[RMDB]
RNA sequence: GGGAACGACUCGAGUAGAGUCGAAAAAUGCUACGUUUCCUGAUCUUUUCGUACAUAAAAGAUUGUGCGUAUCAGCCACAAGUAAGCUUGGACUUAAGAUACACAAAAAUAAAAAGUAAAAUUUAAACGAGCAUAUACUUUUCGAAGUAUAUGCUCGAAAAGAAACAACAACAACAAC
Reactivity to 2A3 in 0.01 (KOAc 150mM, MgCl2 10mM, bicine 150mM(pH8.5), 24C), signal-to-noise 2, nucleotides 027 to 126: a000u120g020c030u040a000c010g010u050u060u050c000c000u020g040a010u030c050u000u070u010u050c080g080u070a070c020a090u240a100a030a000a070g100a040u000u080g010u040g040c000g030u000a030u010c000a040g110c040c000a110c000a100a000g080u080a190a000g110c040u000u040g050g000a040c000u060u120a100a010g000a010u110a020c000a000c000a050a120a000a070a130u300a010a100a130a010a000g060u150a070a230a300a160u200u190u260a250a010a000
Reactivity to DMS in 0.01 (KOAc 150mM, MgCl2 10mM, bicine 150mM(pH8.5), 24C), signal-to-noise 1, nucleotides 027 to 126: a010u010g010c040u010a070c060g040u000u000u000c030c030u030g000a060u020c000u000u010u000u020c050g020u000a180c200a110u000a000a080a050a050g000a070u010u010g070u020g010c110g040u010a040u000c000a160g000c040c010a110c030a040a040g000u000a090a080g010c010u000u000g010g000a060c010u010u090a080a050g000a100u170a010c020a110c030a030a040a250a110a070u140a040a050a270a060a080g000u000a060a050a130a130u010u000u000a070a070a160
Record summary
Chemical mapping of a 177-nucleotide RNA with 2A3 and DMS. For DMS the reverse transcriptase was MarathonRT. The DMS profile rests on 586 reads. 2A3 adducts were read by reverse transcription with SuperScript II with manganese. Conditions: 150 mM KOAc, 10 mM MgCl2 and 150 mM bicine (pH 8.5), 24 C.